[RMDB]
RNA sequence: GGGAACGACUCGAGUAGAGUCGAAAAGACCCACCAAUCGCUAAGGUGGAAGCGGUAGUAAAACGUGAAGGAUAACGUUGCAUGAGCAACGGCCCGAAGGGCGAGACGAAGUCGAGUCAUCCUGCACCGUACUCCAACUAUUCGUAGUUGGAGUACGAAAAGAAACAACAACAACAAC
Reactivity to 2A3 in 0.01 (KOAc 150mM, MgCl2 10mM, bicine 150mM(pH8.5), 24C), signal-to-noise 6, nucleotides 027 to 126: g040a040c020c000c020a010c000c010a040a080u100c050g020c100u140a100a070g050g020u020g030g040a050a020g020c020g090g010u090a060g060u060a120a110a050a040c030g030u040g090a100a030g070g040a080u050a210a070c010g010u000u000g000c060a110u300g160a050g150c000a000a010c000g020g010c020c010c000g070a090a100g060g030g010c040g020a040g000a000c030g020a030a000g060u030c010g010a010g010u010c000a020u040c000c000u030g000c050a060c050
Reactivity to DMS in 0.01 (KOAc 150mM, MgCl2 10mM, bicine 150mM(pH8.5), 24C), signal-to-noise 5, nucleotides 027 to 126: g000a180c080c000c000a090c080c070a090a080u000c070g020c060u010a090a090g000g010u000g010g020a140a130g010c020g010g010u000a060g010u010a090a040a080a100c090g010u010g010a100a100g000g000a070u000a110a100c040g020u000u000g020c000a200u010g010a190g020c010a000a010c010g000g000c040c010c010g030a090a080g010g020g020c010g010a180g000a020c000g010a140a070g000u000c010g000a070g000u000c010a100u000c000c010u000g020c120a080c190

Chemical mapping of a 177-nucleotide RNA with 2A3 and DMS. For 2A3, 9,117 sequencing reads were counted. Values cover nucleotides 27 to 126.